[RMDB]
RNA sequence: GGGAACGACUCGAGUAGAGUCGAAAAUCCCUAAGGUAUUGGAAGCAAUAGCGUUAUAUGGAUCUCCAGAAGAAAAUCCAGAGAUACUCGCCGAGAAAAUUAGAAAAUACCUAGGGAAACAUAUAGGCAAUAAAGGGGUGUUCGCACCCCUUUAUUGAAAAGAAACAACAACAACAAC
Reactivity to DMS in 0.01 (KOAc 150mM, MgCl2 10mM, bicine 150mM(pH8.5), 24C), signal-to-noise 2, nucleotides 027 to 126: u000c010c000c010u020a070a070g010g020u000a010u000u000g000g000a210a160g010c070a080a090u000a100g020c020g030u010u000a100u000a120u010g030g010a010u010c050u000c020c060a160g010a110a280g000a040a070a100a020u000c010c010a050g020a130g020a060u000a020c180u000c110g000c000c010g010a270g010a080a050a160a100u000u020a100g000a230a100a060a010u010a000c010c010u000a010g010g000g000a010a070a070c100a040u010a050u000a100g010g010